[RMDB]
RNA sequence: GGGAACGACUCGAGUAGAGUCGAAAACCUCGCUUCGGCGAGGACGACCUCCUAAGUCAAAUGAGGAGCCUGACAUGAUAGUAUCGGAAACGAUACGCUAUCAACAGCAGGCUCUACCCACCAUUUGAUAUGGACCUCUCCUAGCUUCGGCUAGGAAUAUCAUAUGUCUUUUCGAAGACAUAUGAUAAAAAGAAACAACAACAACAAC
Reactivity to DMS in 0.01 (KOAc 150mM, MgCl2 10mM, bicine 150mM(pH8.5), 24C), signal-to-noise 5, nucleotides 027 to 156: c010c000u010c000g020c010u000u010c240g050g020c000g000a020g030g030a020c020g010a070c020c010u000c020c010u010a080a300g010u000c010a020a020a020u000g000a190g040g010a030g030c010c010u000g010a080c090a300u000g020a040u010a040g020u000a020u000c040g010g010a190a120a270c010g000a030u000a030c050g010c090u000a020u000c000a040a140c060a160g020c000a030g010g000c010u000c000u010a000c020c010c010a300c120c000a020u000u010u000g010a030u000a300u010g000g000a040c050c020u000c070u000c000c000u000a020g000c000u000u010c250g060g000c000u010a000g000g010a020a030
Reactivity to 2A3 in 0.01 (KOAc 150mM, MgCl2 10mM, bicine 150mM(pH8.5), 24C), signal-to-noise 9, nucleotides 027 to 156: c000c000u000c010g000c010u050u100c300g150g000c000g000a000g000g000a080c050g110a060c000c030u020c010c000u080a150a060g010u000c000a000a010a010u020g010a040g030g000a000g000c000c000u090g020a150c020a120u070g000a010u000a020g010u030a010u010c010g020g050a100a070a060c010g010a010u030a080c060g010c030u030a000u010c010a020a110c030a090g060c000a000g000g000c020u000c000u000a000c000c010c020a060c010c010a010u000u000u020g010a010u010a050u100g010g010a040c020c030u110c020u000c010c000u000a010g000c010u070u070c300g090g000c000u010a000g000g000a000a020